The record gives the reactivity of an RNA of 177 nucleotides to 2A3.
For 2A3, 683 sequencing reads were counted.
For 2A3 the reverse transcriptase was SuperScript II with manganese.
The reactions ran in a buffer of 150 mM KOAc, 10 mM MgCl2 and 150 mM bicine (pH 8.5), at 24 C.
RNA sequence: GGGAACGACUCGAGUAGAGUCGAAAAUCUGCAAGAGCUAUUUCCUCCCCUCACGGAUUGUAUUCUGCUGUGAGUCGACACUCAACUACGAGAGGAAGCCAGGGGAGCCGAGUGUCGCAGAGGGCGGCGUGCAGGUGCGUUUCGACGCACCUGCACGAAAAGAAACAACAACAACAAC
Reactivity to 2A3 in 0.01 (KOAc 150mM, MgCl2 10mM, bicine 150mM(pH8.5), 24C), signal-to-noise 2, nucleotides 027 to 126: u050c050u090g050c140a140a100g020a000g090c030u060a150u070u020u090c010c010u030c000c000c000c000u060c010a030c060g030g040a070u150u110g060u100a220u000u160c050u090g000c000u000g030u010g070a020g060u050c000g060a000c000a000c030u010c030a040a180c070u190a090c190g030a070g000a040g090g190a120a060g000c030c020a000g070g000g030g000a070g030c060c020g000a070g020u020g000u020c010g000c020a000g010a030g010g000g060c060g040g000